[RMDB]
RNA sequence: GGGAACGACUCGAGUAGAGUCGAAAACGCAGAGGGUUCUGACAACAAAGAACCUAGAUAGCCGCAUCGGUAUUAUAGGAUGUAGUCGGUGAGCCGGAAUGCCUGCAUCGUAAGCCUAUAAGUAAAUUUAAGUGUAAUCACUUCGGUGAUUACACAACAAAUACUUCCUCUUCGGAGGAAGUAUUUGAAAAGAAACAACAACAACAAC
Reactivity to 2A3 in 0.01 (KOAc 150mM, MgCl2 10mM, bicine 150mM(pH8.5), 24C), signal-to-noise 4, nucleotides 027 to 156: c100g000c030a030g040a080g110g000g000u010u010c020u020g090a080c040a170a020c010a030a300a010g010a000a000c010c000u020a040g030a110u070a020g040c040c020g030c060a080u120c050g040g000u080a040u190u050a040u110a050g050g000a030u060g020u090a040g100u080c040g000g020u030g020a030g010c010c010g120g040a090a050u100g020c010c010u020g050c020a020u020c020g030u040a070a010g000c000c010u070a070u040a110a070g100u110a060a040a230u100u120u110a110a030g000u000g000u000a000a000u000c000a000c000u030u060c190g050g000u000g000a000u000u000a000c000a000c000a000a000
Reactivity to DMS in 0.01 (KOAc 150mM, MgCl2 10mM, bicine 150mM(pH8.5), 24C), signal-to-noise 2, nucleotides 027 to 156: c090g020c060a090g020a290g000g010g020u000u000c000u010g030a220c010a150a200c300a140a240a040g000a040a020c000c000u000a050g020a190u000a130g020c030c020g000c060a070u000c060g030g010u000a050u000u000a050u000a080g000g000a090u000g040u000a070g020u000c010g040g010u000g000a100g020c050c020g050g010a140a150u000g020c040c010u000g010c020a030u000c030g000u000a070a110g020c000c020u000a030u010a010a050g020u010a070a000a140u000u000u010a060a170g010u000g030u000a000a050u000c000a030c020u000u000c250g050g030u000g000a010u010u010a000c000a000c010a020a050

Background:
Structure probing data (2A3 and DMS) for a 207-nucleotide construct. The 2A3 profile rests on 2,814 reads. It was measured as part of the RMDB library M2RFPK. 2A3 adducts were read by reverse transcription with SuperScript II with manganese. Reactivities are given for positions 27 through 156.